Background:
This 177-nucleotide RNA was probed chemically with DMS and 2A3.
RNA sequence: GGGAACGACUCGAGUAGAGUCGAAAAUGGACACCCGCAGUACGUCGCAGCUUCGAUCCCGUAUCGGGUGCCUCUCAAGCCUGCCGCGCCUGGAUUACUGCGGUUCAGUUCUUGUCCGCCGGGCAAGGUCAGUGUUUAUCUUCGGAUAAACACUGACAAAAGAAACAACAACAACAAC
Reactivity to DMS in 0.01 (KOAc 150mM, MgCl2 10mM, bicine 150mM(pH8.5), 24C), signal-to-noise 2, nucleotides 027 to 126: u000g010g000a020c060a090c170c010c000g010c120a040g000u000a010c140g020u010c260g000c040a050g020c050u000u020c130g000a090u000c020c020c030g020u030a110u000c100g000g000g040u000g000c060c050u000c060u000c150a050a080g000c060c040u000g010c000c070g010c060g040c080c050u010g030g000a110u030u000a010c020u000g010c020g000g000u000u010c150a120g010u010u000c020u010u000g000u000c010c010g010c100c110g000g030g030c100a060a080g030
Reactivity to 2A3 in 0.01 (KOAc 150mM, MgCl2 10mM, bicine 150mM(pH8.5), 24C), signal-to-noise 1, nucleotides 027 to 126: u100g080g010a030c020a040c020c000c010g000c020a000g050u020a000c040g020u010c040g020c080a030g020c010u020u070c080g090a140u110c020c020c020g050u130a190u270c010g010g000g060u060g010c000c020u050c000u000c040a070a000g050c040c030u040g040c050c010g060c010g100c040c040u080g050g000a000u000u130a070c010u030g000c000g080g000u010u010c010a030g020u080u020c000u050u050g010u000c000c050g020c090c070g130g000g000c020a040a000g070

The DMS profile rests on 1,320 reads. The 2A3 profile rests on 1,222 reads. The RNA was probed in 150 mM KOAc, 10 mM MgCl2 and 150 mM bicine (pH 8.5) at 24 C. 2A3 adducts were read by reverse transcription with SuperScript II with manganese.